Structure probing data (2A3 and DMS) for a 177-nucleotide construct. DMS adducts were read by reverse transcription with MarathonRT. The reactions ran in a buffer of 150 mM KOAc, 10 mM MgCl2 and 150 mM bicine (pH 8.5), at 24 C.
[RMDB]
RNA sequence: GGGAACGACUCGAGUAGAGUCGAAAAGGGUGCUCGGGUGCGGCUGACCAUGGCGAACUGCGCCGAUGGGCCGACGCUGGUGCAGAUAAACCUGCAGGUAGGUGACACCCCAUUAAGGGCGCAGGCCCUGUGGCUAUACGUUCGCGUAUAGCCACAGAAAAGAAACAACAACAACAAC
Reactivity to 2A3 in 0.01 (KOAc 150mM, MgCl2 10mM, bicine 150mM(pH8.5), 24C), signal-to-noise 7, nucleotides 027 to 126: g030g000g010u050g020c020u030c030g030g020g040u140g100c040g020g020c050u070g050a030c010c030a070u050g040g000c040g030a140a080c050u040g010c010g000c000c000g000a020u020g000g030g000c040c050g070a090c010g010c020u080g040g130u040g000c020a000g010a030u250a050a100a070c020c000u000g000c000a030g080g110u200a040g010g010u050g030a050c020a050c030c000c000c000a010u050u080a090a120g090g000g000c020g000c020a000g030g050c010c000
Reactivity to DMS in 0.01 (KOAc 150mM, MgCl2 10mM, bicine 150mM(pH8.5), 24C), signal-to-noise 7, nucleotides 027 to 126: g010g010g000u010g010c050u010c050g020g000g020u010g010c020g010g010c060u010g000a160c080c040a080u010g000g000c020g020a120a210c060u010g010c030g040c000c020g000a020u000g000g000g000c060c040g000a170c180g000c020u000g000g000u020g000c010a010g000a090u010a100a120a180c160c000u000g010c010a030g000g010u020a130g010g020u010g010a140c210a160c170c000c000c030a060u000u020a090a100g000g010g000c000g010c040a030g000g010c030c030